Annotation: The data come from the RNA Mapping Database (RMDB), library OK2TRN. Chemical mapping of a 177-nucleotide RNA with DMS and 2A3. Values are in units of 0.01, from 0 to 300, in steps of 10. Conditions: 150 mM KOAc, 10 mM MgCl2 and 150 mM bicine (pH 8.5), 24 C.
RNA sequence: GGGAACGACUCGAGUAGAGUCGAAAAACGCCAUAAAGUUCGGGACUGUGCUGGAGAACGUGGUAUUCGAGGAGCACACUCGAGAGGUGGAUUACUCGGACAAAUCUGUCACAGAGAAUACUAGGGCGGGUAAUGUCUUGUUCGCAAGACAUUACCCAAAAGAAACAACAACAACAAC
Reactivity to DMS in 0.01 (KOAc 150mM, MgCl2 10mM, bicine 150mM(pH8.5), 24C), signal-to-noise 1, nucleotides 027 to 126: a040c070g010c020c020a090u000a040a080a120g040u000u000c010g030g000g040a150c140u000g010u010g000c000u010g000g030a300g000a010a040c150g040u010g000g000u020a120u000u000c000g000a300g050g000a040g070c230a060c020a050c010u000c030g000a040g010a090g000g060u000g000g000a080u000u000a040c030u000c010g000g000a010c070a010a060a040u010c040u000g020u000c000a110c110a110g000a120g020a060a040u000a090c070u000a120g000g050g020c120
Reactivity to 2A3 in 0.01 (KOAc 150mM, MgCl2 10mM, bicine 150mM(pH8.5), 24C), signal-to-noise 1, nucleotides 027 to 126: a000c030g000c020c000a020u170a060a080a010g100u090u000c020g050g020g110a090c070u020g000u000g020c010u000g030g050a080g020a140a090c070g180u200g040g080u200a140u040u030c020g020a070g070g140a020g060c040a000c000a020c010u040c010g050a050g010a030g130g050u040g020g010a040u020u050a060c000u030c060g010g000a020c070a030a130a200u200c140u130g020u110c020a000c000a020g020a010g000a100a030u010a060c080u070a020g030g060g040c100